Chemical mapping of a 177-nucleotide RNA with 2A3 and DMS. The data come from the RNA Mapping Database (RMDB), library M2PK90. Conditions: 150 mM KOAc, 10 mM MgCl2 and 150 mM bicine (pH 8.5), 24 C.
RNA sequence: GGGAACGACUCGAGUAGAGUCGAAAAGAAAAUAAGUUGGCCAAAAGCGUAUGCGUAGGCCGCUGGCCAGCGACCGCAAAGCGGUCAAUCGUGAAAACAACACUAUUCGCGGCGAUAAUAAAAAAAACACGUUACAAUAGUUCGCUAUUGUAACGUGAAAAGAAACAACAACAACAAC
Reactivity to 2A3 in 0.01 (KOAc 150mM, MgCl2 10mM, bicine 150mM(pH8.5), 24C), signal-to-noise 2, nucleotides 027 to 126: g050a020a050a010a000u250a070a060g000u040u000g000g000c000c000a000a010a050a040g010c040g050u160a090u270g030c090g030u050a050g260g000c000c010g010c010u000g000g010c010c010a000g000c020g030a010c000c000g000c070a240a210a030g010c000g060g010u030c050a000a060u050c010g000u030g050a070a030a010a040c050a020a010c010a030c070u130a130u130u090c060g000c020g000g000c030g030a020u130a120a140u190a060a040a010a000a000a000a000a000
Reactivity to DMS in 0.01 (KOAc 150mM, MgCl2 10mM, bicine 150mM(pH8.5), 24C), signal-to-noise 2, nucleotides 027 to 126: g010a160a010a090a040u020a040a090g000u000u000g000g000c000c000a020a110a230a180g020c000g000u020a070u000g030c080g020u000a090g000g000c000c010g010c250u000g010g020c010c010a020g000c050g020a030c040c000g020c000a060a060a250g010c010g000g000u000c010a100a010u000c120g010u000g050a030a070a060a070c140a130a070c050a070c060u000a140u010u010c050g020c020g000g020c090g000a080u030a040a130u040a010a000a000a030a050a080a080a090